About this RNA
The record gives the reactivity of an RNA of 207 nucleotides to 2A3. The data come from the RNA Mapping Database (RMDB), library OK3TST. For 2A3, 343 sequencing reads were counted.
[RMDB]
RNA sequence: GGGAACGACUCGAGUAGAGUCGAAAACGACGCUUUUCUAAAGGGAAUAUCUUAAUUAUUCUAUAUCUCCUUUUUCCAUGUCACUGAAGACUGCUCUUUCUAACUCAUGGCUUACAAUAAAUCUCUAAAGUCUUUAGUAUUUAUCCUUUUGGCUUCACUUUUAAUACCACUUCGGUGGUAUUAAAAGAAAAGAAACAACAACAACAAC
Reactivity to 2A3 in 0.01 (KOAc 150mM, MgCl2 10mM, bicine 150mM(pH8.5), 24C), signal-to-noise 1, nucleotides 027 to 156: c060g000a030c030g070c050u120u090u100u000c070u200a020a080a080g000g000g000a030a000u040a030u040c030u180u160a230a210u140u190a180u200u140c070u060a060u000a060u200c100u040c010c000u100u100u000u070u000c030c070a090u180g040u160c030a000c040u040g010a040a000g000a060c060u080g020c030u030c010u030u120u030c060u060a100a050c000u030c060a100u030g100g000c000u000u110a030c030a010a010u140a130a150a100u120c120u010c030u190a180a150a000g040u000c060u010u030u040a030g000u050a150u040u230u050a100u180c020c010u090u150u110u150g040g000c000u050u170c020a000